Structure probing data (2A3) for a 207-nucleotide construct. For 2A3, 475 sequencing reads were counted. The data come from the RNA Mapping Database (RMDB), library OK3TST. The RNA was probed in 150 mM KOAc, 10 mM MgCl2 and 150 mM bicine (pH 8.5) at 24 C.

RNA sequence: GGGAACGACUCGAGUAGAGUCGAAAACAAUGAGGAGUAAAUGGAGAUCGUACACAUUGGGCUAUGAUACUCUGAUGGACCCAACACCACUUAACAUGCCAUUUGGUUCAGGAAUGUAAAAUCUUAGUCUAAUUGUGAGGGAACAUUAGAUGAACCAGAUUUUAGCCCGUUUCGACGGGCUAAAAUCAAAAGAAACAACAACAACAAC
Reactivity to 2A3 in 0.01 (KOAc 150mM, MgCl2 10mM, bicine 150mM(pH8.5), 24C), signal-to-noise 1, nucleotides 027 to 156: c050a000a210u110g020a000g070g000a020g070u160a100a070a050u090g090g040a070g000a020u010c000g040u050a020c020a000c000a060u050u100g020g000g030c030u020a000u080g000a040u130a180c000u030c060u020g120a160u020g020g020a020c010c010c010a000a000c060a030c040c020a060c060u100u150a100a060c040a080u080g030c060c000a120u060u070u180g040g000u000u020c020a020g030g000a050a130u130g000u110a000a300a000a000u060c060u020u010a020g090u000c000u010a000a020u060u100g020u020g090a080g040g000g000a060a000c020a040u040u040a000g020a090u000g060a050a000c000c000a020